[RMDB]
RNA sequence: GGGAACGACUCGAGUAGAGUCGAAAAUAAAAUAGCGUACUAGAGACGCUGAUCUCUACAUAACUACGAACUCUAGAGAUACGGUCCAAUUGAAUACAAGGACAGUUGGACCUAUUCGUAGAAAAAAUCAUAUUACCGACUUCGGUCGGUAAUAUGAAAAAGAAACAACAACAACAAC
Reactivity to DMS in 0.01 (KOAc 150mM, MgCl2 10mM, bicine 150mM(pH8.5), 24C), signal-to-noise 2, nucleotides 027 to 126: u030a060a130a180a170u010a040g020c000g010u000a100c020u000a000g010a020g020a020c000g000c010u020g000a100u000c030u000c000u010a040c200a080u030a070a090c000u000a000c000g000a030a060c000u000c020u000a010g000a300g000a210u000a060c250g000g000u030c020c000a010a020u000u010g000a060a180u000a140c300a160a140g000g030a300c010a000g000u000u010g000g000a020c000c000u010a000u000u000c000g000u000a000g010a000a000a030a050a170a020
Reactivity to 2A3 in 0.01 (KOAc 150mM, MgCl2 10mM, bicine 150mM(pH8.5), 24C), signal-to-noise 1, nucleotides 027 to 126: u130a000a110a020a080u190a050g000c000g020u010a030c010u010a000g020a010g000a000c000g010c000u000g070a080u020c020u010c000u010a080c040a250u150a100a080c000u000a000c010g000a030a020c000u000c000u020a010g000a000g030a090u060a150c130g020g000u000c000c000a010a010u000u030g060a100a000u120a180c090a160a040g080g100a020c000a010g010u010u000g000g000a000c000c000u010a060u000u020c000g000u000a000g000a110a060a010a000a000a030